Chemical mapping of a 177-nucleotide RNA with 2A3 and DMS.
Source: RMDB library OK2TRN, as collected in RNAgym.
The 2A3 profile rests on 1,411 reads.
Reactivities are rounded to 0.1 and cut off at 0 and 3.
For DMS the reverse transcriptase was MarathonRT.
The RNA was probed in 150 mM KOAc, 10 mM MgCl2 and 150 mM bicine (pH 8.5) at 24 C.
RNA sequence: GGGAACGACUCGAGUAGAGUCGAAAACAGCGGCGACAACAUGAACCCUGUCUUCAUAUACUUGGUGCCGAAGCCCUGCCCCCGCGAGCGUAUCGUGCUCCCAGGUUUGUGCGCUCGGCCGGUACGCGACCCAUCAUCAUUUCGAUGAUGAUGGGUCAAAAGAAACAACAACAACAAC
Reactivity to 2A3 in 0.01 (KOAc 150mM, MgCl2 10mM, bicine 150mM(pH8.5), 24C), signal-to-noise 1, nucleotides 027 to 126: c020a010g070c020g030g000c000g070a050c010a130a000c020a050u070g040a100a070c000c040c070u000g070u010c080u060u040c050a030u080a010u000a160c030u040u070g000g000u060g000c030c030g030a040a030g010c000c010c010u050g090c040c010c000c000c000g030c040g020a070g010c000g010u030a020u120c010g060u060g020c010u040c000c000c000a000g080g050u020u090u120g110u030g030c070g040c020u020c010g010g040c000c000g030g010u000a020c020g010c000
Reactivity to DMS in 0.01 (KOAc 150mM, MgCl2 10mM, bicine 150mM(pH8.5), 24C), signal-to-noise 2, nucleotides 027 to 126: c090a120g020c060g010g000c020g000a040c070a030a080c140a030u000g000a070a080c080c080c080u000g000u000c110u000u000c040a040u010a120u010a160c130u020u010g000g010u000g010c040c000g020a070a200g000c040c050c000u000g010c030c000c040c010c050g000c130g000a090g000c000g000u000a040u000c020g000u010g010c040u000c080c030c120a120g000g030u010u000u000g030u010g030c020g000c110u010c050g010g000c000c010g000g000u000a000c070g000c060